[RMDB]
Source: RMDB library OK1LIB, as collected in RNAgym.
An RNA of 177 nucleotides, treated with 2A3 and DMS and read out base by base.
The 2A3 profile rests on 29,807 reads.

RNA sequence: GGGAACGACUCGAGUAGAGUCGAAAAGAUUUCGCAGCGUGGGCCCACCGCGGUAGGCAGGAGUCAGCUCGAUCUGGCGGUCGGUGAGGAUUGAUGUCGAGAUGGUCACCGCCUGCACAUCCGCCGGUCCGUAUAUUAUAUUCGUAUAAUAUACGGAAAAAGAAACAACAACAACAAC
Reactivity to 2A3 in 0.01 (KOAc 150mM, MgCl2 10mM, bicine 150mM(pH8.5), 24C), signal-to-noise 9, nucleotides 027 to 126: g060a030u120u120u100c060g010c060a050g010c030g060u070g010g040g020c010c000c000a030c010c020g010c010g010g020u050a080g050g000c030a020g000g040a030g030u030c010a010g010c050u070c080g090a190u060c030u040g050g030c030g020g060u110c030g040g040u100g040a080g080g060a050u070u160g070a090u130g100u170c080g020a040g040a180u090g080g060u050c020a020c030c020g020c010c000u020g010c010a040c010a060u030c010c010g030c020c030g030g020
Reactivity to DMS in 0.01 (KOAc 150mM, MgCl2 10mM, bicine 150mM(pH8.5), 24C), signal-to-noise 9, nucleotides 027 to 126: g010a120u010u010u000c040g010c050a070g000c050g020u010g000g010g000c020c020c030a160c040c040g010c030g010g010u010a060g010g010c010a030g010g010a160g010u000c020a030g000c040u040c110g010a060u030c040u010g010g000c070g010g010u020c020g000g010u020g000a080g000g010a060u010u000g000a140u050g000u030c110g010a150g010a070u010g000g010u000c020a030c020c020g000c020c000u000g010c020a060c070a090u010c010c000g010c040c060g010g000